[RMDB]
RNA sequence: GGGAACGACUCGAGUAGAGUCGAAAACAGAUAAAUAUAACUGCUAAAAAUAACACUUCUUACGCACUCGCUGCCUAAACACCAGCUUGCGUAGCUGAUGAUCGUUCGCCGAUGGCGGCCUGAAGCUCUAAACCUCAGUCGGAUACGUUUUUAUGGUCUUCAUUAAGAACUUCGGUUCUUAAUGAAGAAAAGAAACAACAACAACAAC
Reactivity to 2A3 in 0.01 (KOAc 150mM, MgCl2 10mM, bicine 150mM(pH8.5), 24C), signal-to-noise 3, nucleotides 027 to 156: c020a020g120a110u170a110a210a060u250a050u080a200a110c030u040g000c020u120a130a080a040a140a140u240a270a050c060a100c100u100u080c050u100u090a020c020g000c000a030c050u170c100g010c000u000g000c000c000u050a050a040a020c020a010c010c000a000g000c000u010u040g000c010g030u020a020g000c000u010g010a070u010g010a020u040c010g020u060u040c030g000c020c000g030a030u070g010g010c010g000g000c000c020u030g030a020a000g030c000u010c050u150a100a190a130c010c040u130c060a030g010u000c000g040g000a040u050a110c080g010u030u000u000u030u080a180u150g190g010u000
Source information:
Conditions: 150 mM KOAc, 10 mM MgCl2 and 150 mM bicine (pH 8.5), 24 C. The record gives the reactivity of an RNA of 207 nucleotides to 2A3. For 2A3 the reverse transcriptase was SuperScript II with manganese.